[RMDB]
RNA sequence: GGGAACGACUCGAGUAGAGUCGAAAAACAAAAACACACAUGGUAUUCUUGAUGUUGAGUACGCUUUAUUUCAAUCAACAUGUUAUUAUCACCUUUUGCAUAAUAGUUCUAAGAUUUAUAAUAUUACCAGGACCAAUCAAUUCGUUGAUUGGUCCUGAAAAGAAACAACAACAACAAC
Reactivity to 2A3 in 0.01 (KOAc 150mM, MgCl2 10mM, bicine 150mM(pH8.5), 24C), signal-to-noise 3, nucleotides 027 to 126: a000c080a000a050a030a030a010c130a000c020a000c010a070u150g070g000u070a060u000u110c020u070u160g140a080u060g060u060u040g000a030g060u170a090c050g010c070u110u200u080a140u060u230u140c070a060a030u040c000a000a080c000a020u030g050u070u020a060u060u030a050u060c020a090c040c000u030u100u130u070g040c030a010u000a110a060u060a140g030u150u060c040u090a150a020g020a110u010u130u080a060u080a180a090u090a060u090u060a020c070
Reactivity to DMS in 0.01 (KOAc 150mM, MgCl2 10mM, bicine 150mM(pH8.5), 24C), signal-to-noise 1, nucleotides 027 to 126: a130c060a040a050a040a050a080c140a100c140a060c090a170u000g030g000u000a060u000u010c180u000u000g000a060u020g000u000u000g000a020g000u000a020c130g010c100u000u030u000a020u040u010u070c120a040a060u060c030a000a090c300a110u000g020u000u000a020u000u000a030u000c000a030c200c020u010u000u000u020g000c030a050u040a000a000u000a080g000u010u000c110u070a030a080g000a030u010u000u190a060u000a030a140u020a040u130u030a160c180

An RNA of 177 nucleotides, treated with 2A3 and DMS and read out base by base.
Conditions: 150 mM KOAc, 10 mM MgCl2 and 150 mM bicine (pH 8.5), 24 C.
For DMS, 1,459 sequencing reads were counted.